[RMDB]
Source information: The record gives the reactivity of an RNA of 177 nucleotides to DMS and 2A3.
RNA sequence: GGGAACGACUCGAGUAGAGUCGAAAAAGCGUGUUGGCGAUUGGGUCGGUGAUUGCGGUGGUGAGCCCCCAGGUGGAGGAUGCUCCAUGAACCCAACGUCCUCCUCUGUGAAUUCCGGCUGAGAGGCGGUCAUGAUUAUGUUCGCAUAAUCAUGACCAAAAGAAACAACAACAACAAC
Reactivity to DMS in 0.01 (KOAc 150mM, MgCl2 10mM, bicine 150mM(pH8.5), 24C), signal-to-noise 3, nucleotides 027 to 126: a060g000c080g020u010g030u000u010g010g000c040g010a120u000u010g010g010g040u000c060g020g030u010g010a120u010u000g020c080g000g030u000g020g030u010g000a150g020c010c010c050c040c030a080g010g020u010g020g020a010g010g010a050u000g000c090u000c060c080a060u020g030a120a120c040c010c020a070a210c050g010u000c000c000u000c010c000u010c000u010g010u000g010a060a140u010u010c060c040g010g000c030u000g010a130g000a100g010g010c160
Reactivity to 2A3 in 0.01 (KOAc 150mM, MgCl2 10mM, bicine 150mM(pH8.5), 24C), signal-to-noise 1, nucleotides 027 to 126: a010g060c060g020u040g030u050u110g060g030c060g050a120u020u120g050g010g010u080c020g000g040u080g040a080u070u130g020c040g060g000u070g000g080u070g050a030g010c020c020c000c000c000a020g070g060u110g020g010a020g010g000a040u040g060c010u000c030c040a020u040g050a030a040c050c000c020a020a010c010g010u060c000c000u000c010c000u000c000u050g030u010g020a010a020u090u030c030c000g020g000c040u050g040a050g010a060g140g070c050